Source: RMDB library OK2TST, as collected in RNAgym. Chemical mapping of a 177-nucleotide RNA with DMS and 2A3. For DMS, 6,225 sequencing reads were counted.

RNA sequence: GGGAACGACUCGAGUAGAGUCGAAAAUGUUUGAAGAGAUGAGUUACGUGAGUGUGCAUUAUUCUGAAGUGUUGGCCAGUCGACUACGUCAAACCGCAUCUUCAGCUUCCAAAUCAAAUGUCGAGGAACGACUAGCAUAUUUCGAUAUGCUAGUCGUAAAAGAAACAACAACAACAAC
Reactivity to DMS in 0.01 (KOAc 150mM, MgCl2 10mM, bicine 150mM(pH8.5), 24C), signal-to-noise 5, nucleotides 027 to 126: u020g010u010u000u000g020a080a040g020a100g010a080u010g000a140g000u000u000a060c100g020u010g010a070g040u000g010u000g010c050a050u000u000a090u010u000c080u000g000a100a090g030u000g020u000u010g020g010c030c040a130g010u000c030g020a090c080u010a080c130g000u000c050a020a070a130c070c030g000c110a050u000c020u000u000c020a050g000c140u000u000c030c030a050a070a100u010c150a050a070a050u000g010u000c050g010a110g010g010a130
Reactivity to 2A3 in 0.01 (KOAc 150mM, MgCl2 10mM, bicine 150mM(pH8.5), 24C), signal-to-noise 3, nucleotides 027 to 126: u110g040u060u050u130g030a070a020g030a030g010a090u090g040a030g100u050u060a020c020g050u070g090a040g030u110g000u040g020c020a020u060u060a120u230u090c020u080g090a100a040g040u030g000u170u130g050g000c030c020a020g020u030c040g020a060c050u120a060c090g050u040c020a020a020a060c020c010g020c060a050u030c000u010u020c010a000g000c010u060u000c020c020a040a080a090u080c060a040a010a130u150g050u060c030g030a060g000g060a110
The reactions ran in a buffer of 150 mM KOAc, 10 mM MgCl2 and 150 mM bicine (pH 8.5), at 24 C.